Structure probing data (DMS and 2A3) for a 177-nucleotide construct. Conditions: 150 mM KOAc, 10 mM MgCl2 and 150 mM bicine (pH 8.5), 24 C. The DMS profile rests on 3,153 reads. For 2A3, 1,951 sequencing reads were counted. Reactivities are given for positions 27 through 126.
RNA sequence: GGGAACGACUCGAGUAGAGUCGAAAAUGACGCGAUCGGCCGCUCGCGCCUGCGGCAGAUCGUAAUCGGCGGUGAAGCCAUCCGCUGUAGCGCCGUGGACAAGUGGCUUGAAUCGGCUGCUUCACAAAAGAUAGUGACGGUUCGCCGUCACUAUCUUAAAAGAAACAACAACAACAAC
Reactivity to DMS in 0.01 (KOAc 150mM, MgCl2 10mM, bicine 150mM(pH8.5), 24C), signal-to-noise 2, nucleotides 027 to 126: u040g000a140c150g020c000g030a000u000c010g000g040c010c010g060c000u030c060g000c010g010c040c070u040g050c050g010g000c010a020g000a000u020c030g010u000a060a070u020c020g010g020c060g010g020u000g000a020a040g030c020c050a060u010c020c050g020c010u010g000u020a120g000c010g000c020c000g000u010g000g000a050c250a100a070g000u010g020g000c030u010u010g020a110a040u020c120g010g000c040u020g030c010u030u010c060a000c140a050a120
Reactivity to 2A3 in 0.01 (KOAc 150mM, MgCl2 10mM, bicine 150mM(pH8.5), 24C), signal-to-noise 3, nucleotides 027 to 126: u160g020a020c070g010c000g000a010u000c000g020g000c000c000g010c080u110c080g080c010g030c030c030u000g010c010g010g000c000a000g000a000u000c020g000u030a050a160u120c020g000g000c000g040g050u030g070a110a010g040c020c030a030u060c020c030g000c050u030g020u090a100g050c070g010c050c000g070u010g040g000a070c060a100a030g030u010g070g020c000u030u040g070a110a070u110c010g000g010c010u020g020c000u070u060c100a030c010a070a150